[RMDB]
RNA sequence: GGGAACGACUCGAGUAGAGUCGAAAACUACAGCUACGGCUGUAGAACUUGGCGUUCGCGCCAAGAGGUAACGGUGACGUUACCAUUCACUGAUAAAGUGGAGAACCGCUUCACCAAAAGCUGUCCCUUAGGGGAUUAGAACUUGAGUGAAGGUGGGCUGCUUGCAUCAGCCUAAUGUCGAGAAGUGCUUUCUUCGGAAAGUAACCCUCGAAACAAAUUCAUUUGAAAGAAUGAAGGAAUGCAACGGAAAUUAGGUGCGCUUGGCUAAAGGCAGGUUCGCCUGCCUUAAAAGAAACAACAACAACAAC
Reactivity to DMS in 0.01 (KOAc 150mM, MgCl2 10mM, bicine 150mM(pH8.5), 24C), signal-to-noise 4, nucleotides 027 to 266: c010u000a010c010a010g000c010u000a080c230g050g010c000u000g000u010a000g010a070a160c010u000u010g010g010c000g030u010u030c200g030c010g030c000c000a000a010g020a090g020g000u000a010a010c000g000g000u010g000a110c010g010u000u000a000c000c000a160u000u000c010a020c020u000g000a150u010a060a160a030g020u000g010g010a050g010a130a150c130c120g000c000u000u000c000a010c000c000a020a020a110a070g010c000u000g010u000c000c000c000u000u030a130g020g000g000g000a000u000u020a000g010a070a050c120u000u000g000a130g010u010g000a000a000g010g030u000g000g000g010c010u000g000c130u000u000g000c040a040u000c010a020g000c010c010u010a090a080u020g010u000c010g000a020g000a020a160g000u000g000c010u000u000u000c000u000u040c170g000g000a010a000a010g000u000a020a010c020c240c000u000c000g010a010a060a050c100a070a090a090u000u010c010a010u000u000u000g000a110a080a140g000a010a000u000g010a010a030g010g000a070a010u000g010c010a020a030c300g000g000a060a060a130u020u010a060g010g010u000g000c080g000c060u000u000g010g000c040u010a070
Reactivity to 2A3 in 0.01 (KOAc 150mM, MgCl2 10mM, bicine 150mM(pH8.5), 24C), signal-to-noise 4, nucleotides 027 to 266: c000u000a000c000a000g000c000u010a070c270g160g000c000u000g000u010a020g000a000a030c000u000u010g010g020c030g070u060u050c250g030c000g000c100c000a000a000g040a040g000g020u000a000a000c010g020g070u080g060a020c010g000u000u000a000c000c000a000u030u040c000a000c000u040g050a140u210a300a230a020g010u020g010g020a060g040a070a020c040c050g090c100u000u000c000a010c000c010a070a010a000a010g020c000u000g000u000c020c000c010u010u070a150g030g010g020g020a020u150u300a030g020a050a060c100u010u020g030a020g070u000g000a010a010g040g060u120g010g000g010c000u010g010c030u040u020g000c020a010u010c000a030g000c000c000u130a200a090u190g090u040c000g000a000g000a030a010g010u000g000c000u040u020u000c000u030u060c140g080g010a000a010a000g000u000a020a010c000c010c000u000c000g010a010a010a000c030a000a070a010u050u040c020a010u010u010u050g090a070a050a030g040a010a000u010g000a000a010g030g020a080a000u010g000c000a020a020c040g060g070a040a050a130u180u100a170g080g030u060g040c080g020c090u080u110g090g030c040u120a030
Source: RMDB library POS240, as collected in RNAgym. An RNA of 307 nucleotides, treated with DMS and 2A3 and read out base by base. For 2A3, 5,127 sequencing reads were counted. For 2A3 the reverse transcriptase was SuperScript II with manganese.